[RMDB]
RNA sequence: GGGAACGACUCGAGUAGAGUCGAAAAGUCGCGAUCUCAGCUCGCUGCAACCUCCACAGCCUGGGUUCAAGCAAUCCUCCUGCCUCAGCCACCUGAGUAGCUGGGAUUACGGGCACAUGCCACCACACGUAGCAGUUUCUGUGUUUUUUAGUAGAGAACUAAUGGUAUUAUUCGUAAUACCAUUAGUAAAAGAAACAACAACAACAAC
Reactivity to 2A3 in 0.01 (KOAc 150mM, MgCl2 10mM, bicine 150mM(pH8.5), 24C), signal-to-noise 4, nucleotides 027 to 156: g100u080c020g010c030g090a050u010c030u020c040a020g020c030u070c040g030c020u040g000c020a060a150c000c030u080c030c010a040c030a020g050c000c010u040g000g010g000u040u050c070a060a040g040c020a040a070u040c000c010u020c020c030u020g020c010c000u020c010a010g010c030c000a080c020c030u030g020a020g030u050a020g010c010u050g010g000g010a010u030u050a030c020g010g000g020c040a050c020a090u130g010c010c020a040c000c020a050c010a010c090g050u050a020g040c040a020g020u020u050u010c010u030g040u010g030u020u010u030u060u030u030a120g040u070a050g030a020g030a160
Reactivity to DMS in 0.01 (KOAc 150mM, MgCl2 10mM, bicine 150mM(pH8.5), 24C), signal-to-noise 2, nucleotides 027 to 156: g010u000c010g010c000g000a090u010c010u000c010a080g010c010u020c040g000c050u000g010c060a060a100c070c010u000c010c030a120c010a080g000c040c030u000g020g050g030u010u000c060a060a100g020c060a080a040u000c030c020u000c030c010u000g010c030c020u000c040a040g000c020c020a070c060c020u010g000a070g040u000a050g030c020u000g000g000g000a050u000u000a030c030g010g010g000c020a070c050a050u000g010c000c020a070c020c030a030c060a050c060g010u000a080g020c030a100g010u000u000u000c030u010g010u000g000u000u000u000u000u010u000a140g020u000a060g010a170g010a100
Structure probing data (2A3 and DMS) for a 207-nucleotide construct. 2A3 adducts were read by reverse transcription with SuperScript II with manganese. Source: RMDB library OK3TST, as collected in RNAgym. Values cover nucleotides 27 to 156. The RNA was probed in 150 mM KOAc, 10 mM MgCl2 and 150 mM bicine (pH 8.5) at 24 C. In probing experiments dimethyl sulfate is read out at A N1 and C N3, which are open when not base-paired. The DMS profile rests on 6,197 reads.